The data come from the RNA Mapping Database (RMDB), library M2RFPK. This 207-nucleotide RNA was probed chemically with DMS and 2A3. Reactivities are given for positions 27 through 156. For 2A3, 1,919 sequencing reads were counted. The DMS profile rests on 3,672 reads. The RNA was probed in 150 mM KOAc, 10 mM MgCl2 and 150 mM bicine (pH 8.5) at 24 C.
[RMDB]
RNA sequence: GGGAACGACUCGAGUAGAGUCGAAAAACAACAUGCCCAGGUAGCCCAUACCUUCAAGGCUACGGUGCGUUGCGACGCACGGUCUGAUUCUUCACAACGACGUUCACCGCGUCUUCUUCCAUCCCCCUCCAGCGCACGAAGUUCGCUUCGUGCGCAACCAUCAUAUAUCCUUCGGGAUAUAUGAUGGAAAAGAAACAACAACAACAAC
Reactivity to DMS in 0.01 (KOAc 150mM, MgCl2 10mM, bicine 150mM(pH8.5), 24C), signal-to-noise 1, nucleotides 027 to 156: a060c040a090a070c070a070u010g030c020c000c040a080g010g000u000a030g030c020c030c030a130u010a160c040c090u020u000c100a120a080g010g030c000u000a030c000g040g050u010g020c060g030u000u000g020c120g010a120c020g000c000a050c000g000g020u000c020u000g010a140u010u000c040u000u050c070a140c060a070a100c020g020a110c050g040u000u000c030a080c060c080g000c030g000u000c020u000u000c010u020u000c020c030a100u000c030c010c000c000c010u000c030c030a130g000c000g000c000a010c000g030a010a050g030u000u010c250g000c000u000u000c000g020u000g000c000g010c000a010a020
Reactivity to 2A3 in 0.01 (KOAc 150mM, MgCl2 10mM, bicine 150mM(pH8.5), 24C), signal-to-noise 2, nucleotides 027 to 156: a010c090a020a010c020a070u100g020c000c000c000a020g050g000u000a000g040c020c020c050a130u100a090c020c000u080u150c090a090a040g010g000c010u030a030c030g020g000u030g000c020g010u040u080g040c140g070a010c000g030c010a020c050g000g020u050c070u080g090a130u150u010c040u060u110c110a050c030a240a090c110g020a010c050g070u090u170c050a030c120c030g020c010g020u010c030u020u020c020u070u000c050c050a160u070c020c000c000c000c000u000c000c010a040g000c000g000c000a000c000g000a000a000g010u030u050c080g010c050u000u000c010g000u010g010c030g000c000a000a000